[RMDB]
RNA sequence: GGGAACGACUCGAGUAGAGUCGAAAAUCAUCUUCCAGGAUGCAGCAGACUGAAGAAAUUCAGACAUCCCGCAACCUGCGAUUAUCGCAAGGUCAAGGCAAAGUCCGGUAAUGGCGUUCUGAAUACCUGGGUGGUGACAAUUCGUUGUCACCACCCAAAAAGAAACAACAACAACAAC
Reactivity to 2A3 in 0.01 (KOAc 150mM, MgCl2 10mM, bicine 150mM(pH8.5), 24C), signal-to-noise 2, nucleotides 027 to 126: u090c030a010u000c000u120u000c000c000a000g070g000a020u040g000c060a000g070c020a070g010a020c030u130g000a040a030g030a040a190a030u040u000c000a000g010a020c010a030u020c000c000c000g000c000a000a060c000c000u020g000c020g060a040u130u160a260u250c010g000c030a120a090g010g020u010c010a010a050g020g000c050a290a000a080g060u010c000c000g000g030u000a000a000u090g100g000c010g000u000u000c000u070g070a050a060u070a180c000c040
Reactivity to DMS in 0.01 (KOAc 150mM, MgCl2 10mM, bicine 150mM(pH8.5), 24C), signal-to-noise 1, nucleotides 027 to 126: u000c090a020u010c070u000u050c000c050a060g010g000a110u000g060c020a110g000c130a110g000a130c000u000g030a000a000g000a130a070a060u000u000c000a060g000a160c020a210u030c040c000c000g000c050a050a040c020c030u020g000c010g030a230u000u070a130u070c000g000c000a050a000g000g000u050c040a020a110g000g010c090a000a170a140g000u020c000c000g030g000u020a000a000u050g000g000c000g000u030u000c000u060g000a200a060u030a050c080c040